[RMDB]
The record gives the reactivity of an RNA of 177 nucleotides to 2A3 and DMS. The data come from the RNA Mapping Database (RMDB), library OK1LIB. For 2A3 the reverse transcriptase was SuperScript II with manganese. The DMS profile rests on 1,968 reads. High 2A3 reactivity points to a flexible backbone, as in loops and unpaired stretches.
RNA sequence: GGGAACGACUCGAGUAGAGUCGAAAAAAUGCUGAAGCUUUGGUGACAAAAAUAUAUGAUAUUUCGAAAUGGGACGAGGCGUAUCAACAUUUAAAAUCUGGCGAAGGUAUUAAAGCAUUACUUAAGCUGCUCCAGUAUGUUUCGACAUACUGGAGCAAAAAGAAACAACAACAACAAC
Reactivity to 2A3 in 0.01 (KOAc 150mM, MgCl2 10mM, bicine 150mM(pH8.5), 24C), signal-to-noise 2, nucleotides 027 to 126: a010a010u010g000c000u010g010a050a010g020c020u080u020u070g040g030u050g030a060c100a010a030a000a130a000u070a030u010a010u160g050a010u030a070u060u180u050c030g010a020a140a240u130g010g000g060a040c060g040a070g000g020c090g000u000a030u000c020a010a020c000a000u100u180u160a030a120a010a010u050c050u050g010g030c000g030a050a020g000g040u130a030u190u130a150a030a000g020c020a000u060u180a020c040u060u070a040a000g000c110
Reactivity to DMS in 0.01 (KOAc 150mM, MgCl2 10mM, bicine 150mM(pH8.5), 24C), signal-to-noise 2, nucleotides 027 to 126: a030a000u020g030c000u010g000a110a070g000c080u000u060u050g000g020u050g020a110c050a000a060a090a020a060u010a080u020a170u040g000a120u040a030u000u000u010c030g030a120a060a050u020g000g000g000a120c120g000a090g000g000c000g000u000a010u010c040a050a090c080a060u000u000u010a070a060a030a090u000c060u020g010g000c030g000a040a040g000g000u000a050u020u030a030a040a100g000c090a070u010u000a110c030u000u000a050a230g010c120